RNA sequence: GGGAACGACUCGAGUAGAGUCGAAAAGAUAUGGAUUCAAGCUUUUGACGCUCCACUGGUCGGAAACGACCAAGAAGAGCGAUAAGCUUGAUCCUAAGUCAAAGUAAGGCGCUUCGGCGCCUUACAAUCUCUAUUAAGGGUUCGCCCUUAAUAGAGAAAAAGAAACAACAACAACAAC
Reactivity to 2A3 in 0.01 (KOAc 150mM, MgCl2 10mM, bicine 150mM(pH8.5), 24C), signal-to-noise 2, nucleotides 027 to 126: g030a050u100a070u180g000g020a030u240u140c010a010a040g010c020u070u120u130u260g240a170c070g010c020u010c020c010a040c040u010g020g020u000c020g000g020a080a040a050c020g000a000c020c010a000a000g030a020a010g000a000g000c030g050a040u010a040a000g000c000u010u000g000a000u010c000c000u000a090a030g040u030c060a220a080a000g000u010a000a020g000g000c000g000c100u050u160c300g140g000c000g030c050c000u010u010a000c000a000a010
Reactivity to DMS in 0.01 (KOAc 150mM, MgCl2 10mM, bicine 150mM(pH8.5), 24C), signal-to-noise 3, nucleotides 027 to 126: g000a040u000a300u000g000g000a010u000u000c020a000a000g010c010u000u000u010u010g030a170c060g010c000u000c000c040a250c130u010g020g000u000c000g010g000a120a090a230c010g010a020c000c000a010a000g010a220a220g000a010g010c000g010a070u020a010a010g030c000u000u000g000a040u000c000c000u000a050a120g010u000c030a110a110a120g000u010a010a020g000g010c000g040c000u000u010c240g030g010c000g020c000c000u000u000a000c000a050a120